[RMDB]
RNA sequence: GGGAACGACUCGAGUAGAGUCGAAAAGAAGAGAAGAAACGGCCUUUGGUAGGAAAGGCCGAACAAGCGUGACCUACCAACAAGCAAGGAGCAGGCUGGUAUUCCUGCAAAGAGAGAGUAGGAGAAAAAUGCCCUCACUGUUCGCAGUGAGGGCAUUAAAAGAAACAACAACAACAAC
Reactivity to DMS in 0.01 (KOAc 150mM, MgCl2 10mM, bicine 150mM(pH8.5), 24C), signal-to-noise 1, nucleotides 027 to 126: g020a210a070g000a150g040a060a060g000a050a040a100c070g000g000c000c020u010u000u000g000g000u050a120g040g010a040a120a090g040g050c000c000g020a100a060c100a080a180g000c040g000u030g030a300c000c030u000a000c000c000a080a040c140a030a100g020c180a080a150g010g030a110g000c000a020g000g000c040u000g030g000u100a000u080u010c000c010u000g000c000a000a090a070g000a070g020a000g000a210g040u000a000g000g000a060g020a020a000a130
Reactivity to 2A3 in 0.01 (KOAc 150mM, MgCl2 10mM, bicine 150mM(pH8.5), 24C), signal-to-noise 1, nucleotides 027 to 126: g070a070a080g050a020g000a080a040g240a090a010a000c000g000g000c000c000u000u000u020g000g000u000a010g000g080a070a000a000g190g090c020c000g000a000a050c050a080a000g000c110g110u090g020a090c000c000u000a000c010c010a010a000c050a180a000g000c000a070a060g010g030a120g030c020a000g000g030c000u040g050g000u050a080u000u160c000c000u000g000c060a040a020a000g050a000g010a000g000a000g000u000a000g000g210a070g100a050a000a000